[RMDB]
RNA sequence: GGGAACGACUCGAGUAGAGUCGAAAAGAUAUGGAAUUGUAGGGAGGUGUUAUCGGAAACGAUAAUACACCGAAGAACUACAAGAUUCCUAAGUCAAAAGCUCUUUUGGGUUCGCCCAAAAGAGCAAGAUCUUAAUGUCGUUCGCGACAUUAAGAUCAAAAGAAACAACAACAACAAC
Reactivity to 2A3 in 0.01 (KOAc 150mM, MgCl2 10mM, bicine 150mM(pH8.5), 24C), signal-to-noise 1, nucleotides 027 to 126: g000a000u010a010u050g000g000a000a040u050u060g010u010a010g000g010g000a010g010g000u020g000u020u000a010u010c000g000g000a000a000a000c000g010a000u000a020a050u180a060c020a000c000c000g040a100a030g010a010a010c000u000a010c000a010a060g140a300u050u000c000c000u010a000a010g020u010c000a080a080a060a080g000c000u020c000u020u020u000u000g120g000g000u080u160c300g160c030c000c080a000a000a000a000g010a000g000c000a000a000
Reactivity to DMS in 0.01 (KOAc 150mM, MgCl2 10mM, bicine 150mM(pH8.5), 24C), signal-to-noise 3, nucleotides 027 to 126: g000a000u010a010u020g000g000a020a050u010u000g010u010a000g020g010g020a010g030g050u000g010u010u000a010u010c000g010g000a000a010a020c000g010a020u000a000a100u000a200c030a000c000c000g030a060a130g010a150a180c000u000a010c000a040a150g020a210u000u000c000c000u000a000a160g000u010c010a100a140a180a170g000c000u000c000u000u000u000u000g010g010g020u020u020c300g020c030c010c000a000a000a010a010g000a010g000c000a020a050
This 177-nucleotide RNA was probed chemically with 2A3 and DMS. DMS adducts were read by reverse transcription with MarathonRT. Source: RMDB library TTRDES, as collected in RNAgym. For 2A3, 5,735 sequencing reads were counted.